[RMDB]
RNA sequence: GGGAACGACUCGAGUAGAGUCGAAAAGCACCUCGUUGCUGGGACCCACUGUGCGGAUCCUUGGAAUGAUCGACAGGAUUGAGCCCAAGGUGAAGACCUACUGCCAGUUCUGGUUUGACGGCCAAAAUAUGUAUGUCACGUUCGCGUGACAUACAUAAAAAGAAACAACAACAACAAC
Reactivity to 2A3 in 0.01 (KOAc 150mM, MgCl2 10mM, bicine 150mM(pH8.5), 24C), signal-to-noise 1, nucleotides 027 to 126: g000c000a080c020c090u080c070g160u210u070g060c040u010g050g000g090a060c000c080c000a030c070u170g040u170g190c050g020g040a040u020c000c000u000u020g060g000a140a080u170g050a090u020c020g120a150c050a110g030g300a090u050u080g060a050g000c020c000c010a000a000g000g000u030g000a030a010g030a030c020c000u150a090c020u000g040c000c000a030g000u050u050c040u090g040g050u080u100u140g080a070c010g050g000c020c030a020a060a070a140
Reactivity to DMS in 0.01 (KOAc 150mM, MgCl2 10mM, bicine 150mM(pH8.5), 24C), signal-to-noise 4, nucleotides 027 to 126: g010c060a100c030c110u000c160g000u000u000g000c030u000g010g000g010a090c010c020c030a100c100u010g020u000g010c030g030g000a070u000c010c020u000u000g000g010a160a110u010g000a030u010c010g000a100c160a090g010g000a100u000u000g000a120g000c170c040c050a080a040g000g010u000g000a300a100g000a080c020c040u010a100c120u000g000c010c050a060g000u000u000c060u000g010g010u000u010u020g010a060c120g000g000c020c060a050a060a070a140